Chemical mapping of a 177-nucleotide RNA with DMS and 2A3.
For 2A3, 2,777 sequencing reads were counted.
DMS adducts were read by reverse transcription with MarathonRT.
[RMDB]
RNA sequence: GGGAACGACUCGAGUAGAGUCGAAAAGGUUGGGGCUGAUUAUCAAACAAAGUGCAUUCGACCAACAGUCUCGGGAACUAGCUCUACAGCGCAGAAAGAUUCAAGUCAUUUUUGGAAACACUGGAUAACUAGGACUGAAUUUCGAUUCAGUCCUAGUAAAAGAAACAACAACAACAAC
Reactivity to DMS in 0.01 (KOAc 150mM, MgCl2 10mM, bicine 150mM(pH8.5), 24C), signal-to-noise 5, nucleotides 027 to 126: g000g020u000u010g010g010g010g030c050u000g020a080u000u010a160u010c140a080a070a100c130a060a090a090g010u010g010c070a100u010u000c070g010a080c040c040a060a120c070a090g000u000c030u000c050g020g010g010a080a100c080u010a060g000c040u000c050u010a040c050a040g010c050g020c040a020g000a050a060a070g010a270u000u000c060a020a040g010u030c110a090u000u000u000u010u020g000g010a030a030a070c050a020c020u000g010g000a120u010a070
Reactivity to 2A3 in 0.01 (KOAc 150mM, MgCl2 10mM, bicine 150mM(pH8.5), 24C), signal-to-noise 3, nucleotides 027 to 126: g070g000u030u040g020g020g000g000c040u020g030a120u050u130a120u230c110a080a060a110c060a070a160a010g050u060g100c030a110u020u110c050g030a040c020c020a030a030c000a030g020u000c020u030c010g000g000g010a070a090c080u060a020g010c010u020c010u080a030c020a020g020c010g000c030a000g100a040a160a000g060a020u010u070c030a010a020g030u010c070a080u040u040u050u060u040g010g010a040a070a010c020a050c040u070g000g040a040u060a170